The data come from the RNA Mapping Database (RMDB), library OK2TRN. This 177-nucleotide RNA was probed chemically with DMS and 2A3. The RNA was probed in 150 mM KOAc, 10 mM MgCl2 and 150 mM bicine (pH 8.5) at 24 C. For DMS, 6,319 sequencing reads were counted. DMS (dimethyl sulfate) methylates the pairing face of unpaired adenines and cytosines.
RNA sequence: GGGAACGACUCGAGUAGAGUCGAAAACGUCAAUGAGUCUCGGGCAGUUAUCACCAGCUUAUUGGAUCAGAUUCCAGAAAUGUUUGCAGACACAAGGGAAACAGAGACAGUAUUUGUACCAGUUAUCGGUCUUAGUGAUAUUCGUAUCACUAAGACCAAAAGAAACAACAACAACAAC
Reactivity to DMS in 0.01 (KOAc 150mM, MgCl2 10mM, bicine 150mM(pH8.5), 24C), signal-to-noise 6, nucleotides 027 to 126: c140g010u000c060a070a080u010g010a070g020u000c020u010c120g010g000g010c100a080g000u010u000a060u000c090a110c050c040a070g010c070u010u000a050u020u000g000g010a050u010c080a110g010a180u010u010c020c010a070g010a080a050a070u000g010u000u000u000g010c080a080g020a080c060a030c110a050a100g000g000g000a070a060a070c030a040g010a120g000a050c050a050g020u000a050u000u010u010g010u000a120c050c060a100g000u000u000a100u020c140
Reactivity to 2A3 in 0.01 (KOAc 150mM, MgCl2 10mM, bicine 150mM(pH8.5), 24C), signal-to-noise 4, nucleotides 027 to 126: c030g020u020c020a020a080u080g030a050g080u040c050u050c100g010g010g050c060a100g050u110u100a130u150c040a030c060c030a010g000c000u040u090a060u080u100g020g000a010u060c010a040g110a160u080u040c010c010a020g090a010a190a060u150g050u060u070u090g000c030a020g030a070c030a000c010a110a060g070g000g010a090a030a000c030a020g020a000g000a030c020a040g030u020a060u070u090u060g050u040a090c000c000a020g070u160u070a160u240c070